[RMDB]
An RNA of 177 nucleotides, treated with 2A3 and DMS and read out base by base. High 2A3 reactivity points to a flexible backbone, as in loops and unpaired stretches. Values cover nucleotides 27 to 126. DMS adducts were read by reverse transcription with MarathonRT. For 2A3 the reverse transcriptase was SuperScript II with manganese. Reactivities are rounded to 0.1 and cut off at 0 and 3. Conditions: 150 mM KOAc, 10 mM MgCl2 and 150 mM bicine (pH 8.5), 24 C.

RNA sequence: GGGAACGACUCGAGUAGAGUCGAAAAUUUGUUUUUGACUCCACAAACAAAAUCAAGUUCUGUCGAUACAGUAUGUGGGACAAUUAGAUAUGGAAACUAAUAAGCUUAGUUGAGGUGCAGGUGCAAGGUCAUAGGGCACAUUCGUGUGCCCUAUGACAAAAGAAACAACAACAACAAC
Reactivity to 2A3 in 0.01 (KOAc 150mM, MgCl2 10mM, bicine 150mM(pH8.5), 24C), signal-to-noise 1, nucleotides 027 to 126: u000u000u040g020u060u000u000u060u000g070a020c020u000c050c000a000c000a010a300a000c090a020a150a050a070u060c010a020a240g020u170u020c000u060g070u000c070g000a000u010a100c010a000g110u040a050u260g010u160g000g170g000a000c100a000a080u110u220a020g030a120u270a220u180g240g040a000a210a000c020u020a030a020u200a070a000g050c140u050u020a070g040u010u010g020a020g000g040u010g000c000a000g000g110u030g000c000a020a010g160
Reactivity to DMS in 0.01 (KOAc 150mM, MgCl2 10mM, bicine 150mM(pH8.5), 24C), signal-to-noise 2, nucleotides 027 to 126: u030u010u010g020u000u000u000u000u000g030a120c090u010c010c050a040c030a050a120a130c180a010a030a040a050u020c080a040a040g010u020u000c070u020g000u010c080g000a040u020a040c180a090g020u000a100u020g010u000g000g000g040a080c080a030a040u000u000a040g010a100u010a070u000g000g000a100a020a070c040u000a020a020u000a050a070g000c120u010u020a060g010u000u000g000a090g000g010u000g020c070a030g010g010u000g010c060a020a020g030